This 177-nucleotide RNA was probed chemically with DMS and 2A3. Values are in units of 0.01, from 0 to 300, in steps of 10. DMS adducts were read by reverse transcription with MarathonRT.
RNA sequence: GGGAACGACUCGAGUAGAGUCGAAAACCUGUAAUCCUGGACGGACCACCAAUGGGGAAACCACGUUGAGAGACCGGACCCGACAGUGAGGGACGAAAGCCAGGGUCUCGAACCGGAUUAGAUACCCUACACUCUCAUGAUUCGUCAUGAGAGUGUAAAAAGAAACAACAACAACAAC
Reactivity to DMS in 0.01 (KOAc 150mM, MgCl2 10mM, bicine 150mM(pH8.5), 24C), signal-to-noise 6, nucleotides 027 to 126: c030c030u000g010u020a070a050u010c020c010u020g030g010a220c070g000g010a070c030c010a200c080c030a050a080u030g030g000g010g010a110a110a150c040c020a090c100g030u010u000g000a220g000a080g000a040c040c030g000g000a130c020c000c000g010a150c160a070g020u040g000a190g020g010g000a140c040g010a040a090a080g000c030c030a110g010g010g010u000c020u020c030g010a110a110c050c040g000g010a060u010u020a060g010a110u020a070c040c030c020
Reactivity to 2A3 in 0.01 (KOAc 150mM, MgCl2 10mM, bicine 150mM(pH8.5), 24C), signal-to-noise 5, nucleotides 027 to 126: c000c000u010g040u040a050a040u030c010c030u060g020g040a020c020g010g030a030c000c020a060c020c030a080a120u090g020g010g000g050a030a040a050c040c010a190c060g030u050u130g090a070g000a000g010a080c030c030g050g020a110c000c000c010g080a070c050a080g120u090g180a130g010g030g010a020c030g130a160a030a010g060c020c010a040g020g010g080u000c050u040c030g020a040a020c020c030g000g000a010u000u030a010g010a020u160a070c010c000c000